[RMDB]
RNA sequence: GGGAACGACUCGAGUAGAGUCGAAAACGGGGAAAAGCAGACUCCCGGCCUAUCCGGAACAUCCGCUGUUCCGGCCAAGACGGUGUCCCGUCCAAGUCCUGCAAACAUAUGUGCUUCGGCACAUAUGCCUUAACACUCUGUUCGCAGAGUGUUAAGGAAAAGAAACAACAACAACAAC
Reactivity to 2A3 in 0.01 (KOAc 150mM, MgCl2 10mM, bicine 150mM(pH8.5), 24C), signal-to-noise 4, nucleotides 027 to 126: c000g010g010g000g020a020a160a060a070g010c010a010g010a040c010u020c010c000c000g020g020c000c000u020a050u030c010c000g000g020a010a010c010a020u070c090c210g080c280u020g000u010u010c000c000g000g000c020c020a070a020g010a000c000g010g050u110g130u210c030c000c000g010u000c020c020a040a010g030u090c030c020u010g000c020a020a110a010c010a000u000a000u000g000u000g000c010u060u040c190g100g000c000a010c000a000u000a000u010g030
Reactivity to DMS in 0.01 (KOAc 150mM, MgCl2 10mM, bicine 150mM(pH8.5), 24C), signal-to-noise 5, nucleotides 027 to 126: c030g000g010g010g000a100a080a080a160g010c000a020g000a090c040u000c030c010c010g000g000c020c000u000a090u000c000c000g000g000a020a030c010a030u000c250c290g030c200u010g020u000u000c000c010g000g000c300c130a060a060g010a040c020g000g010u010g020u010c150c010c000g010u000c030c140a070a060g010u000c090c010u000g000c020a180a110a300c010a010u000a000u000g010u000g000c000u000u010c200g020g010c000a010c000a000u000a000u000g000